Structure probing data (2A3 and DMS) for a 177-nucleotide construct. DMS adducts were read by reverse transcription with MarathonRT.
RNA sequence: GGGAACGACUCGAGUAGAGUCGAAAAGAUAUGGACUACCCACCGCUACACCGCUGCGGUUCGGAAACGAACCGAACUACAGCGGGGUAGCGAGGUCCUAAGUCAAAGCGUCAGUUCGCUGACGCAACCAACAAAACAUCUUCGGAUGUUUUGUUGGAAAAGAAACAACAACAACAAC
Reactivity to 2A3 in 0.01 (KOAc 150mM, MgCl2 10mM, bicine 150mM(pH8.5), 24C), signal-to-noise 3, nucleotides 027 to 126: g010a020u130a130u200g000g000a000c010u160a210c040c010c010a020c010c000g000c000u000a000c020a020c010c000g000c010u020g000c020g000g000u000u000c020g000g060a240a230a100c110g050a160a050c030c000g000a010a010c040u090a020c010a000g000c000g000g000g000g000u000a000g020c000g010a010g000g000u030c030c000u030a260a090g090u090c080a140a070a040g030c000g000u000c000a010g000u020u170c200g000c220u010g010a000c000g000c000a000a000
Reactivity to DMS in 0.01 (KOAc 150mM, MgCl2 10mM, bicine 150mM(pH8.5), 24C), signal-to-noise 2, nucleotides 027 to 126: g000a080u010a210u000g000g000a000c000u000a150c020c010c040a300c150c000g010c010u000a000c000a030c000c000g020c000u000g000c010g020g000u000u000c000g020g000a070a120a130c240g000a110a140c010c010g000a000a000c000u010a110c020a000g020c010g000g000g000g020u000a010g010c020g010a000g010g010u000c000c010u000a050a140g020u000c080a070a110a140g000c000g030u010c000a010g020u010u000c240g020c000u000g000a000c000g030c020a050a080
Source: RMDB library TTRDEL, as collected in RNAgym. Conditions: 150 mM KOAc, 10 mM MgCl2 and 150 mM bicine (pH 8.5), 24 C. High 2A3 reactivity points to a flexible backbone, as in loops and unpaired stretches.